[RMDB]
RNA sequence: GGGAACGACUCGAGUAGAGUCGAAAAACGGUGCUCAACUAGCUGCGUAAGUAGCUUUUUGUUACACCAUCUAGCGGUACGCCGCUAGCGGUUUUUAACAAGGUGCCAGUACCGCGUUAACGACUGUCACUUAGAACUGGAUCGCAGUGAAGCCUGCCAAGAAUACAUUGUUCGCAAUGUAUUCUUGAAAAGAAACAACAACAACAAC
Reactivity to 2A3 in 0.01 (KOAc 150mM, MgCl2 10mM, bicine 150mM(pH8.5), 24C), signal-to-noise 7, nucleotides 027 to 156: a000c070g000g000u010g000c020u010c030a000a010c010u010a000g000c000u020g010c020g070u170a180a230g000u020a050g010c000u010u010u000u010u010g040u030u100a030c000a000c000c000a010u030c000u000a000g000c000g040g000u030a030c210g030c050c000g000c000u000a000g000c010g010g010u010u000u000u010u030a010a000c010a010a020g000g000u010g010c000c000a000g010u010a030c000c010g000c010g010u010u010a020a010c030g010a010c010u010g030u130c050a040c210u090u260a010g000a020a000c000u000g020g000a040u090c060g000c010a010g000u040g150a070a010g050c000c000u010g000c010
Reactivity to DMS in 0.01 (KOAc 150mM, MgCl2 10mM, bicine 150mM(pH8.5), 24C), signal-to-noise 4, nucleotides 027 to 156: a050c070g010g040u000g010c020u020c030a020a010c020u000a030g030c000u000g020c000g010u010a140a190g040u010a010g020c000u000u000u000u010u000g010u010u000a040c060a030c030c010a100u000c000u000a030g040c030g020g040u000a070c210g030c030c000g030c010u000a010g010c060g030g000u000u000u000u000u020a040a080c030a080a130g010g020u000g020c050c110a100g010u000a040c000c000g000c250g010u000u000a040a060c020g010a020c000u000g000u000c080a050c130u000u010a100g030a080a090c040u010g010g000a090u010c060g010c040a060g020u000g000a100a080g000c070c010u000g020c100